[RMDB]
RNA sequence: GGGAACGACUCGAGUAGAGUCGAAAAGAUAUGGAUCGCUCGAUAAGAUAGCAUCGGAAACGAUGCUUAUCUUUUGACGAGCAUCCUAAGUCAAAGAGAGCCUGAAUCUUCGGAUUCAGGCUCUCAACCAUAACGUAUAGUUCGCUAUACGUUAUGGAAAAGAAACAACAACAACAAC
Reactivity to 2A3 in 0.01 (KOAc 150mM, MgCl2 10mM, bicine 150mM(pH8.5), 24C), signal-to-noise 1, nucleotides 027 to 126: g010a020u060a020u120g000g010a010u020c200g000c010u010c010g070a080u040a170a020g000a010u000a010g000c000a010u000c010g010g000a050a050a000c010g000a000u010g000c000u010u030a000u000c010u010u050u010u050g130a080c010g000a000g000c000a000u000c000c000u000a040a010g020u020c030a020a270a020g010a000g000a000g000c000c000u000g010a010a000u010c020u080u150c300g020g000a010u010u000c010a000g000g000c010u000c000u000c010a010a000
Reactivity to DMS in 0.01 (KOAc 150mM, MgCl2 10mM, bicine 150mM(pH8.5), 24C), signal-to-noise 8, nucleotides 027 to 126: g010a030u010a300u010g000g000a010u000c190g020c000u000c000g020a140u000a020a010g010a020u000a020g000c000a010u000c010g010g000a100a070a150c010g010a010u000g000c000u000u000a000u000c000u000u000u000u010g010a180c120g000a010g000c000a020u000c000c000u010a030a110g000u000c040a090a120a130g000a010g000a010g000c000c000u000g000a010a000u010c000u000u020c200g030g000a010u000u000c000a000g000g000c000u000c000u000c000a010a090

An RNA of 177 nucleotides, treated with 2A3 and DMS and read out base by base. It was measured as part of the RMDB library TTRDEL. Conditions: 150 mM KOAc, 10 mM MgCl2 and 150 mM bicine (pH 8.5), 24 C. Reactivities are rounded to 0.1 and cut off at 0 and 3.